[RMDB]
RNA sequence: GGGAACGACUCGAGUAGAGUCGAAAAGAUAUGGAUCGCCCAAAACAAUUAACCACAGACAUGCUGGGUGUCGGAAACGACACUUUCAGCAACAGCUGUGGUUAAUUGUUUUGGCGAUCCUAAGUCAGUAAUCCUAGUUGUUCGCAACUAGGAUUACAAAAGAAACAACAACAACAAC
Reactivity to DMS in 0.01 (KOAc 150mM, MgCl2 10mM, bicine 150mM(pH8.5), 24C), signal-to-noise 2, nucleotides 027 to 126: g000a040u010a300u010g000g000a000u000c000g000c190c060c090a030a010a030a010c000a000a010u000u000a000a010c000c000a010c010a000g010a080c090a270u000g020c010u000g020g010g010u000g000u010c000g010g000a120a110a190c000g020a020c010a000c000u000u000u040c010a000g040c020a010a030c300a180g020c000u000g030u000g000g000u000u000a000a000u000u000g010u000u000u000u000g000g000c010g010a000u010c000c010u000a010a070g010u000c070a160